[RMDB]
RNA sequence: GGGAACGACUCGAGUAGAGUCGAAAAGAGUUUCUGUUCGCAGAAACUCAGUGCGUACCUGCGUUAAAAUAAUAGCUACGCUUAAUAAAUUUUUUUAACGCAAAAGUGGUUAUUUCGAUAACCACAAACUCUUAACUCUGUUCGCAGAGUUAAGAGUAAAAGAAACAACAACAACAAC
Reactivity to DMS in 0.01 (KOAc 150mM, MgCl2 10mM, bicine 150mM(pH8.5), 24C), signal-to-noise 2, nucleotides 027 to 126: g000a030g020u000u000u000c000u010g010u000u000c110g030c000a010g010a010a010a000c000u000c000a030g000u000g010c160g010u000a110c060c050u000g000c000g000u000u000a000a000a000a040u000a050a040u010a100g010c050u030a060c220g020c050u000u010a050a120u000a070a070a040u000u000u010u020u000u000u010a000a010c000g020c000a020a050a100a110g010u010g020g000u010u000a000u000u000u000c100g020a030u000a010a020c000c000a000c000a040a100
Reactivity to 2A3 in 0.01 (KOAc 150mM, MgCl2 10mM, bicine 150mM(pH8.5), 24C), signal-to-noise 1, nucleotides 027 to 126: g000a010g000u000u000u000c010u000g040u000u030c200g000c060a010g010a010a010a020c000u000c000a000g110u100g080c030g060u060a060c010c020u000g030c010g000u000u010a040a010a010a040u060a070a030u060a100g020c060u100a010c140g030c000u080u040a100a030u110a100a210a130u040u000u010u010u000u000u000a030a000c000g000c000a060a030a000a120g010u020g000g000u010u000a010u040u130u060c120g050a020u010a000a000c000c000a000c000a000a060
Structure probing data (DMS and 2A3) for a 177-nucleotide construct. For DMS, 1,509 sequencing reads were counted.